Chemical mapping of a 207-nucleotide RNA with 2A3 and DMS.
Conditions: 150 mM KOAc, 10 mM MgCl2 and 150 mM bicine (pH 8.5), 24 C.
The DMS profile rests on 2,419 reads.
[RMDB]
RNA sequence: GGGAACGACUCGAGUAGAGUCGAAAAAAUGGCACUGCAGAGCUGAUGGGCCAUGUACCUAUCCAAAAUGAGAUCCCAUCUUGCACACUGUGCUAAUUUGAUAUUCUCAUGCCUCCUACUUGGAGAGACCGCAUGCCCAGCUUCGGCUGGGCAUGAAAUCGCAAUGACUAUUCGUAGUCAUUGCGAUAAAAGAAACAACAACAACAAC
Reactivity to 2A3 in 0.01 (KOAc 150mM, MgCl2 10mM, bicine 150mM(pH8.5), 24C), signal-to-noise 2, nucleotides 027 to 156: a000a020u020g000g000c000a020c000u050g050c130a080g000a020g120c010u030g000a010u010g000g000g010c030c030a050u070g010u050a070c030c010u060a120u220c060c060a080a080a000a100u120g010a180g030a290u220c000c000c010a000u030c000u100u200g000c020a050c000a020c060u010g010u000g010c000u040a030a120u000u010u010g060a090u030a030u150u050c030u000c010a010u110g030c020c000u000c010c010u080a280c120u100u100g000g000a040g000a000g030a020c130c080g000c020a000u010g000c000c000c020a000g000c000u010u100c080g010g010c040u000g020g000g070c000a000u000g040a040a010
Reactivity to DMS in 0.01 (KOAc 150mM, MgCl2 10mM, bicine 150mM(pH8.5), 24C), signal-to-noise 2, nucleotides 027 to 156: a050a040u020g010g020c010a130c020u010g000c070a200g010a160g060c040u000g020a010u010g010g040g040c100c050a120u010g010u000a120c080c020u010a180u000c110c090a040a060a130a080u000g010a180g010a120u000c050c020c000a060u000c020u000u000g010c020a150c040a130c070u000g070u010g000c020u000a050a080u000u000u000g010a160u000a120u000u000c020u000c010a150u010g000c050c020u020c000c020u010a070c230u020u000g010g010a030g010a140g010a070c020c120g040c000a020u010g030c000c010c000a040g010c000u000u000c240g060g060c020u000g000g040g000c000a000u000g000a010a080